[RMDB]
RNA sequence: GGGAACGACUCGAGUAGAGUCGAAAAUUGUAGUCUCAAAUGUACCCACACUCAUCGUCGUUUGGGCCAGCUGGGAUGGCGCCUCGCUUGAUUGGCUGAGGAAGAACAUCUUCAAUCGGGAGGUCACGGACAUGAGAGCGUUCGCGCUCUCAUGUCCAAAAGAAACAACAACAACAAC
Reactivity to 2A3 in 0.01 (KOAc 150mM, MgCl2 10mM, bicine 150mM(pH8.5), 24C), signal-to-noise 1, nucleotides 027 to 126: u050u020g000u020a000g060u070c000u030c080a080a090a000u030g000u130a180c000c010c000a100c000a030c010u160c020a090u060c140g060u030c000g000u000u000u040g050g010g000c000c030a020g000c070u130g020g020g030a030u010g080g000c010g070c140c000u000c000g150c000u120u140g060a070u090u050g110g000c180u120g010a000g100g000a000a000g020a030a140c000a260u110c000u100u020c110a000a020u030c000g010g000g020a000g010g000u000c010a040c000

Conditions: 150 mM KOAc, 10 mM MgCl2 and 150 mM bicine (pH 8.5), 24 C.
An RNA of 177 nucleotides, treated with 2A3 and read out base by base.
It was measured as part of the RMDB library OK1LIB.
For 2A3, 490 sequencing reads were counted.